Structure probing data (DMS and 2A3) for a 177-nucleotide construct.
Values cover nucleotides 27 to 126.
For 2A3, 1,363 sequencing reads were counted.
DMS adducts were read by reverse transcription with MarathonRT.
It was measured as part of the RMDB library OK2TRN.
The DMS profile rests on 1,553 reads.
For 2A3 the reverse transcriptase was SuperScript II with manganese.

RNA sequence: GGGAACGACUCGAGUAGAGUCGAAAAUAAGUAAACCUUCAUUUAAUCAGUUAUUCAAUCAGUUAGUGAUUCAGCAAAUAUUUAUUGAGCACCAACCAUUUGCCAGACACCAUUCUGAGUGCUGGAGUCUUACAGAAUUUUUCGAAAUUCUGUAAGAAAAAGAAACAACAACAACAAC
Reactivity to DMS in 0.01 (KOAc 150mM, MgCl2 10mM, bicine 150mM(pH8.5), 24C), signal-to-noise 3, nucleotides 027 to 126: u000a060a050g020u000a070a150a190c080c030u000u000c050a070u000u010u000a080a060u010c050a080g000u010u010a110u010u010c110a070a060u010c080a040g010u010u000a050g000u000g000a070u010u000c080a100g000c070a040a030a080u000a060u000u000u000a040u010u010g000a100g010c080a050c100c050a090a070c110c080a100u010u000u000g000c030c020a110g000a120c030a010c020c030a080u000u000c100u010g020a090g020u000g000c040u000g010g010a190g000
Reactivity to 2A3 in 0.01 (KOAc 150mM, MgCl2 10mM, bicine 150mM(pH8.5), 24C), signal-to-noise 2, nucleotides 027 to 126: u180a040a020g070u070a040a030a120c000c000u060u070c020a090u090u150u230a100a020u050c000a010g030u040u140a130u220u040c040a030a090u010c020a010g030u030u180a020g000u040g060a050u000u100c040a000g000c050a100a070a010u140a140u170u120u010a090u020u040g040a040g020c040a020c040c030a030a030c030c010a080u040u080u110g040c000c000a020g050a070c010a010c010c020a000u190u100c040u120g080a040g090u020g000c010u010g000g020a050g050